RNA sequence: GGGAACGACUCGAGUAGAGUCGAAAAAGAUUUGUGUCUUCAUAGUAGUGUGUUGACACAUCUGUGAUUCUAACCACUUCUCCAUUUAUUCCUGUAAAGGCGAAUACGCCUAAAAAGGCCAUAAGGAAAUGAUGGAUGCGUUCGCGCAUCCAUCAUUAAAAGAAACAACAACAACAAC
Reactivity to DMS in 0.01 (KOAc 150mM, MgCl2 10mM, bicine 150mM(pH8.5), 24C), signal-to-noise 1, nucleotides 027 to 126: a020g000a000u000u000u070g040u000g000u010c000u040u000c000a000u000a090g040u000a230g010u000g000u050g030u000u000g000a040c110a000c000a040u000c000u000g010u050g000a120u000u000c020u050a190a220c040c020a080c000u040u000c000u000c000c070a180u050u030u000a010u020u000c020c000u000g010u060a090a040a000g000g000c000g040a260a180u000a000c150g000c000c000u010a000a070a070a210a040g000g000c280c300a060u120a170a160g000g000a000
Reactivity to 2A3 in 0.01 (KOAc 150mM, MgCl2 10mM, bicine 150mM(pH8.5), 24C), signal-to-noise 2, nucleotides 027 to 126: a020g050a010u160u160u100g010u030g000u000c000u000u010c000a000u010a120g190u050a120g030u200g000u030g010u130u010g000a000c010a000c000a020u030c010u060g080u080g040a120u060u050c020u180a070a170c040c000a040c000u100u030c040u000c000c000a050u000u070u070a010u120u140c000c010u090g070u150a090a160a000g000g000c010g080a070a070u270a300c040g000c000c000u010a050a040a000a000a040g060g030c030c000a050u070a030a060g110g000a030